[RMDB]
RNA sequence: GGGAACGACUCGAGUAGAGUCGAAAAGAGUACAUAUGCCCAGCCUUACUGAACCGGCUGGAUGCUUCGUGCAAAUGCUAUGUACGCCUACGUAUAUGUGCGUAGAUGCCUAUAUUUUCUCUCCUGAGAAAAUAUAGAUGCAUACAAAGGUUAUGCAUAUUAGCCCAUAGUUCGCUAUGGGCUAAUAAAAAGAAACAACAACAACAAC
Reactivity to DMS in 0.01 (KOAc 150mM, MgCl2 10mM, bicine 150mM(pH8.5), 24C), signal-to-noise 3, nucleotides 027 to 156: g000a090g030u010a010c050a050u010a040u000g010c050c020c000a050g000c000c000u000u020a300c090u000g020a140a100c070c170g020g000c000u000g000g010a040u000g030c030u000u010c150g010u010g000c040a050a070a110u000g020c030u010a030u000g020u000a010c040g050c010c030u020a020c000g040u000a070u010a160u000g000u010g020c000g030u000a050g020a090u010g000c050c040u000a010u010a010u000u000u000u000c000u000c010u000c280c300u010g020a020g010a040a000a010a010u000a010u000a010g020a090u000g020c020a050u000a050c060a130a120a110g040g000u000u000a090u000g030c010a220
Reactivity to 2A3 in 0.01 (KOAc 150mM, MgCl2 10mM, bicine 150mM(pH8.5), 24C), signal-to-noise 3, nucleotides 027 to 156: g090a040g010u020a000c000a010u050a020u300g010c000c010c020a010g000c000c000u220u190a210c130u290g050a120a040c060c020g010g020c000u000g010g020a000u070g010c000u050u160c140g100u180g020c010a110a000a160u130g000c000u020a010u010g000u000a000c000g000c010c000u030a020c000g030u030a080u030a080u280g210u070g030c000g000u010a030g010a120u160g010c000c000u000a000u000a000u010u000u000u000c000u020c020u080c010c200u150g000a000g000a000a000a030a000u010a000u000a010g010a030u040g010c000a020u030a020c070a040a190a000g030g020u150u040a000u040g010c010a000
Conditions: 150 mM KOAc, 10 mM MgCl2 and 150 mM bicine (pH 8.5), 24 C. This 207-nucleotide RNA was probed chemically with DMS and 2A3. 2A3 adducts were read by reverse transcription with SuperScript II with manganese. As a SHAPE reagent, 2A3 marks flexible, mostly unpaired nucleotides at the ribose 2'-OH. Source: RMDB library OK3TST, as collected in RNAgym. High DMS reactivity at an A or C suggests that its Watson-Crick edge is free. For 2A3, 1,105 sequencing reads were counted.